[RMDB]
RNA sequence: GGGAACGACUCGAGUAGAGUCGAAAAUCCCUGUUCCUCCGUUUGGAGGGCAGAUAGAACAUGAUGACUGGAGAUGCAUGAAAUGUGACUAAUGUCUCUGUGUAAUCAGGACUUGCAACACCCUGAUCGGUUUGUUAAAUUUCGAUUUAACAAACCGAAAAGAAACAACAACAACAAC
Reactivity to 2A3 in 0.01 (KOAc 150mM, MgCl2 10mM, bicine 150mM(pH8.5), 24C), signal-to-noise 9, nucleotides 027 to 126: u010c000c000c000u000g010u170u220c010c000u000c010c020g180u110u170u300g000g000a000g000g000g000c000a000g010a040u170a020g160a040a020c050a080u100g020a010u070g040a070c010u020g060g040a040g030a040u090g040c020a020u040g120a110a160a060u180g050u040g040a040c030u120a100a050u160g010u020c010u000c020u060g060u020g030u160a040a050u030c000a010g020g000a010c000u070u110g010c050a050a020c010a060c050c010c010u030g010a030u010
Reactivity to DMS in 0.01 (KOAc 150mM, MgCl2 10mM, bicine 150mM(pH8.5), 24C), signal-to-noise 4, nucleotides 027 to 126: u000c000c020c000u000g030u000u010c010c000u000c010c030g020u030u040u050g000g040a030g010g000g000c000a020g000a160u010a060g030a120a060c090a060u010g030a040u020g010a050c100u020g000g010a060g000a040u010g020c030a040u020g000a060a060a150u010g010u020g010a070c070u000a110a090u020g020u000c020u010c020u000g000u010g010u030a090a030u000c000a030g010g010a160c060u010u010g000c200a060a110c200a130c060c030c020u000g000a070u000
Chemical mapping of a 177-nucleotide RNA with 2A3 and DMS. 2A3 adducts were read by reverse transcription with SuperScript II with manganese. The reactions ran in a buffer of 150 mM KOAc, 10 mM MgCl2 and 150 mM bicine (pH 8.5), at 24 C.